[RMDB]
RNA sequence: GGGAACGACUCGAGUAGAGUCGAAAAGACAAAUGCAGCAUAUUAGGCUAAGCAGGAAAGGGACGGUAGCUCCUGCUGUCAGUUCAUACGGUGUGAUGCAUCUGCGUCGUGCACACAUGCACCCAAAGGAAUCAUAAGUCUUCGGACUUAUGAUUCCAAAAGAAACAACAACAACAAC
Reactivity to 2A3 in 0.01 (KOAc 150mM, MgCl2 10mM, bicine 150mM(pH8.5), 24C), signal-to-noise 3, nucleotides 027 to 126: g050a010c020a010a080a010u060g010c010a000g000c000a010u040a070u150u160a110g050g000c000u040a060a000g010c020a010g000g010a040a110a030g060g000g050a040c060g050g020u040a020g020c030u020c040c000u020g000c000u030g030u070c040a020g020u080u170c030a040u100a150c110g020g000u040g010u030g010a070u020g010c010a020u010c030u090g060c040g040u060c010g020u040g000c010a000c000a010c010a060u060g020c010a040c000c010c000a060a040a010
Reactivity to DMS in 0.01 (KOAc 150mM, MgCl2 10mM, bicine 150mM(pH8.5), 24C), signal-to-noise 3, nucleotides 027 to 126: g010a050c020a040a070a060u000g010c010a000g010c030a030u000a040u020u000a130g020g010c040u010a060a030g030c010a000g000g000a010a080a120g030g000g000a020c090g000g020u010a090g010c080u000c020c000u010g000c020u000g000u000c090a060g010u000u020c090a090u000a100c200g000g030u000g020u000g000a060u000g010c010a010u000c050u000g010c110g010u000c060g020u000g010c020a050c210a060c190a050u000g000c030a120c000c010c020a050a080a130